RNA sequence: GGGAACGACUCGAGUAGAGUCGAAAACAUCGCGCUUCUUCUUCAACUCGGACCGGCUCAUCUCGACAAGAGGCGGCAGUCCUCAGUGCUCUUACUCUUUUCUGAUAAAGAGGAGACUGCUGGACUCGCCGCCCAAGUUCGAGCAUGGGCCAAUUCCUCAUUGCCCUCUGUUCGCAGAGGGCAAUGAAAAAGAAACAACAACAACAAC
Reactivity to 2A3 in 0.01 (KOAc 150mM, MgCl2 10mM, bicine 150mM(pH8.5), 24C), signal-to-noise 1, nucleotides 027 to 156: c050a080u260c110g000c030g020c070u040u000c010u140u010c000u080u070c070a000a000c010u000c040g050g050a060c000c090g000g000c000u010c000a000u010c000u000c020g030a020c020a070a100g080a170g020g000c040g000g020c020a000g000u000c020c000u010c000a090g000u200g280c020u000c000u070u210a220c000u000c020u010u120u060u250c180u140g140a230u180a300a000a000g000a010g000g000a000g000a000c000u010g030c050u030g020g000a000c000u030c070g010c020c030g020c000c000c000a010a010g010u060u040c000g030a000g040c060a010u000g000g000g040c000c000a000a020u000u000c000c010

The data come from the RNA Mapping Database (RMDB), library VIROID. Structure probing data (2A3) for a 207-nucleotide construct. Values are in units of 0.01, from 0 to 300, in steps of 10.